Chemical mapping of a 177-nucleotide RNA with 2A3 and DMS. The reactions ran in a buffer of 150 mM KOAc, 10 mM MgCl2 and 150 mM bicine (pH 8.5), at 24 C.

[RMDB]
RNA sequence: GGGAACGACUCGAGUAGAGUCGAAAAGCCUGACCCACCCGGGGCAGCUGCGUCCGCACCAUAUCGCGCGGCGCAUCUCGUCGAGCGAAGUACGCCUGCUGUCGGCGCUGUUUCCCGAACUGGCGCAGCUAUUACGGACGUUCGCGUCCGUAAUAGCAAAAGAAACAACAACAACAAC
Reactivity to 2A3 in 0.01 (KOAc 150mM, MgCl2 10mM, bicine 150mM(pH8.5), 24C), signal-to-noise 2, nucleotides 027 to 126: g030c000c010u020g090a070c000c000c000a010c030c070c040g000g010g020g000c020a000g010c010u050g010c010g020u000c020c020g010c030a040c040c030a070u080a040u210c030g000c010g010c020g010g020c000g000c030a090u080c100u030c030g060u030c000g020a020g020c040g040a050a010g040u030a020c040g030c010c020u040g020c010u040g060u110c040g030g000c000g000c020u000g030u030u080u030c000c000c010g010a070a030c060u050g010g000c020g010c030a020
Reactivity to DMS in 0.01 (KOAc 150mM, MgCl2 10mM, bicine 150mM(pH8.5), 24C), signal-to-noise 3, nucleotides 027 to 126: g010c020c020u000g000a110c030c040c010a140c130c070c070g010g020g010g020c080a030g010c050u000g020c030g000u000c020c070g030c040a060c070c070a090u000a090u000c050g010c010g030c050g030g000c010g020c170a080u000c070u000c070g040u000c030g000a060g010c020g000a080a070g010u010a110c080g010c040c090u000g020c050u000g010u010c080g010g030c060g010c040u000g000u000u000u000c000c010c020g000a100a110c120u010g000g020c020g030c150a130
The data come from the RNA Mapping Database (RMDB), library OK2TST.